Structure probing data (2A3 and DMS) for a 177-nucleotide construct.
For 2A3 the reverse transcriptase was SuperScript II with manganese.
For DMS, 8,240 sequencing reads were counted.
RNA sequence: GGGAACGACUCGAGUAGAGUCGAAAAGCGCCAUGAGAAGUGCGGCCAUGGGCGCGGCAAAAAUGCCGACUGCGCCGGUUGCGGCAAGCGCGGCGACGAUGCCUGCGCUCGAACCCCAGCCGAGGGACGAGGGGAUAAAUUUCGAUUUAUCCCCUCGAAAAGAAACAACAACAACAAC
Reactivity to 2A3 in 0.01 (KOAc 150mM, MgCl2 10mM, bicine 150mM(pH8.5), 24C), signal-to-noise 3, nucleotides 027 to 126: g020c030g050c020c040a100u160g080a050g040a200a080g040u090g040c030g020g080c020c020a120u130g010g010g000c000g000c010g000g000c020a040a040a040a000a050u060g000c000c010g010a060c040u090g010c060g020c020c010g100g000u300u300g240c020g010g000c020a050a030g020c090g000c000g100g000c020g010a050c050g030a010u070g030c010c060u080g020c000g000c000u000c010g020a060a050c000c000c000c000a000g090c040c000g010a050g000g000g030a010
Reactivity to DMS in 0.01 (KOAc 150mM, MgCl2 10mM, bicine 150mM(pH8.5), 24C), signal-to-noise 6, nucleotides 027 to 126: g020c080g020c010c020a100u010g010a160g000a150a130g020u010g010c030g000g010c050c060a110u010g000g020g020c000g040c010g010g020c020a010a030a060a100a060u000g010c000c010g010a090c050u000g010c120g020c020c020g000g010u010u010g010c070g010g010c050a090a090g000c080g020c010g000g000c000g010a060c230g000a290u000g000c010c000u020g040c010g000c000u000c010g000a050a140c060c000c010c040a150g000c030c020g000a090g000g000g020a260